About this RNA:
Structure probing data (DMS and 2A3) for a 177-nucleotide construct. The DMS profile rests on 1,989 reads. Reactivities are given for positions 27 through 126. 2A3 adducts were read by reverse transcription with SuperScript II with manganese. DMS adducts were read by reverse transcription with MarathonRT.
RNA sequence: GGGAACGACUCGAGUAGAGUCGAAAACAAGCGGAUGGAGGAACAUACGGCCCUUCGGUCGUGAUCGCUCCCGUCGAUAGCGUGUCCUCUGUGAGUUCACAGUCGGCAAGGUCAUCGCCCUGACGGGAUAGAGUUCUGGGUUCGCCCAGAACUCUAUAAAAGAAACAACAACAACAAC
Reactivity to DMS in 0.01 (KOAc 150mM, MgCl2 10mM, bicine 150mM(pH8.5), 24C), signal-to-noise 2, nucleotides 027 to 126: c120a130a120g000c000g040g020a010u020g000g000a120g000g040a110a070c130a170u040a060c050g000g000c060c040c240u000u030c070g070g050u000c000g010u000g000a190u000c000g000c040u050c000c010c000g000u000c000g000a110u070a090g000c000g010u000g000u000c020c020u000c020u020g010u000g000a260g040u090u040c080a040c040a030g000u060c250g000g030c030a100a030g000g000u020c060a010u000c120g000c040c020c160u000g040a030c050g000g000g000
Reactivity to 2A3 in 0.01 (KOAc 150mM, MgCl2 10mM, bicine 150mM(pH8.5), 24C), signal-to-noise 2, nucleotides 027 to 126: c040a050a020g030c050g000g040a070u120g000g000a040g020g020a040a040c010a050u170a000c000g000g000c000c010c000u110u040c170g000g000u020c000g020u010g000a050u100c010g060c050u000c000c000c020g000u000c000g000a080u120a030g010c010g030u040g010u050c000c000u000c030u000g000u000g010a110g070u250u270c020a010c000a030g060u070c060g130g040c020a000a110g040g040u040c020a060u180c120g040c000c000c000u020g050a010c020g020g020g000